[RMDB]
RNA sequence: GGGAACGACUCGAGUAGAGUCGAAAAACAAGCUGCACGUGCGUGCGAGCAGUUUUCGAAAUCGCACGUUUCACGUAAAGACGCAACUCUACUCGAGAAAGCGAGUCACGCACACAGCGUCAAGGAAGAAUGGCAACUUGUUCGCAAGUUGCCAUUCAAAAGAAACAACAACAACAAC
Reactivity to DMS in 0.01 (KOAc 150mM, MgCl2 10mM, bicine 150mM(pH8.5), 24C), signal-to-noise 1, nucleotides 027 to 126: a060c180a100a100g000c040u000g010c170a020c000g000u000g000c100g000u000g000c060g010a000g070c090a160g000u000u000u000u020c180g020a030a070a100u000c010g040c060a020c000g010u040u000u030c030a050c030g000u000a010a200a140g000a300c000g000c000a020a040c040u000c000u000a000c000u000c000g000a050g000a050a040a080g000c000g000a160g020u000c040a040c060g040c020a180c140a080c070a100g000c000g000u000c030a060a140g000g000a090a060
Reactivity to 2A3 in 0.01 (KOAc 150mM, MgCl2 10mM, bicine 150mM(pH8.5), 24C), signal-to-noise 1, nucleotides 027 to 126: a000c060a040a010g160c030u040g050c020a010c020g020u020g000c010g000u020g020c060g000a040g030c070a070g020u010u000u080u300c080g130a080a020a010u030c030g000c000a000c020g010u010u130u140c060a070c020g010u010a010a010a010g080a010c060g010c040a000a020c020u000c000u000a000c000u000c000g030a010g000a020a000a000g050c010g030a040g060u100c030a010c090g000c010a020c000a010c000a100g010c010g020u030c060a000a040g120g000a000a130